[RMDB]
RNA sequence: GGGAACGACUCGAGUAGAGUCGAAAAACUACCGCCAGAGGUUAGCGGUCGCGAGGGUUGGGGAGCCUGAUGACCGGCCGAGAGCUAGUUGGACUGAGGUUUAAGGGAGCCUACAGUGAACGUUCUGUCGGUUAAAAGAUUUCGAUCUUUUAACCGAAAAAGAAACAACAACAACAAC
Reactivity to 2A3 in 0.01 (KOAc 150mM, MgCl2 10mM, bicine 150mM(pH8.5), 24C), signal-to-noise 9, nucleotides 027 to 126: a000c060u090a080c010c020g050c030c020a050g040a040g070g050u050u050a020g030c000g010g000u000c000g010c010g010a020g030g020g010u110u080g070g050g010g030a020g020c000c000u100g040a190u010g010a020c000c000g000g000c000c000g040a040g000a010g020c020u050a030g050u040u040g030g020a020c000u020g020a020g040g050u030u050u100a060a060g070g020g010a010g010c000c000u050a110c020a010g000u020g070a090a010c040g010u020u010c000u020g040
Reactivity to DMS in 0.01 (KOAc 150mM, MgCl2 10mM, bicine 150mM(pH8.5), 24C), signal-to-noise 6, nucleotides 027 to 126: a060c060u020a100c050c060g010c090c040a060g020a120g000g010u010u000a030g020c010g000g010u000c030g000c030g000a040g020g010g030u000u010g020g000g010g070a120g000c020c020u000g010a050u030g000a050c300c020g000g010c030c010g010a040g000a040g000c020u010a050g000u000u010g000g010a050c050u010g000a080g010g010u010u010u000a110a100g010g010g000a130g000c030c010u000a060c030a040g010u000g000a060a110c130g000u000u000c010u010g010
This 177-nucleotide RNA was probed chemically with 2A3 and DMS. 2A3 adducts were read by reverse transcription with SuperScript II with manganese. For DMS the reverse transcriptase was MarathonRT. It was measured as part of the RMDB libraries RFM100 and RFMREP. As a SHAPE reagent, 2A3 marks flexible, mostly unpaired nucleotides at the ribose 2'-OH. Values cover nucleotides 27 to 126.